Chemical mapping of a 207-nucleotide RNA with DMS and 2A3.
The DMS profile rests on 1,517 reads.
The RNA was probed in 150 mM KOAc, 10 mM MgCl2 and 150 mM bicine (pH 8.5) at 24 C.
2A3 adducts were read by reverse transcription with SuperScript II with manganese.

RNA sequence: GGGAACGACUCGAGUAGAGUCGAAAAGAAACUUAAGUAGGGUGAACAUAUGGAUCAUAUAAGACAAGUAAAGAAGCCAUGGGAAACUCCAGUACUAAAGUCACUGGGCGGGGCAAGUCCUGAAGGAAUGAUAGUGGGGACCACCUCCCUUCAAAAAGGGUAAUAUAUCAUUCGUGAUAUAUUACCCAAAAGAAACAACAACAACAAC
Reactivity to DMS in 0.01 (KOAc 150mM, MgCl2 10mM, bicine 150mM(pH8.5), 24C), signal-to-noise 1, nucleotides 027 to 156: g020a170a130a110c050u000u000a000a170g020u020a050g000g030g050u000g000a080a190c080a150u010a030u010g010g040a120u000c060a060u010a170u000a080a160g050a130c050a040a110g020u000a070a130a180g000a160a050g000c010c120a040u010g000g000g030a120a010a060c010u000c010c030a070g010u000a090c020u000a080a080a210g000u000c120a000c080u000g020g030g000c060g040g000g050g000c030a020a050g000u000c020c050u010g050a140a060g000g020a040a000u000g000a070u000a020g010u010g030g000g000g020a090c050c030a040c050c020u000c040c020c030u000u010c110a070a030a110a110a190
Reactivity to 2A3 in 0.01 (KOAc 150mM, MgCl2 10mM, bicine 150mM(pH8.5), 24C), signal-to-noise 1, nucleotides 027 to 156: g020a000a060a000c070u030u040a060a000g030u020a050g030g000g000u020g070a050a030c020a010u200a030u210g080g000a060u110c030a070u070a020u070a150a020g040a060c020a100a040g090u160a220a000a060g050a020a000g020c120c000a110u050g100g000g010a030a030a030c000u000c000c000a010g020u010a020c020u120a050a140a080g020u070c020a010c090u000g000g000g010c020g020g000g020g020c030a040a040g030u010c000c050u070g030a020a000g010g020a080a050u080g020a020u040a050g030u050g000g010g010g000a000c000c020a010c000c000u000c000c000c000u020u060c040a000a020a060a050a000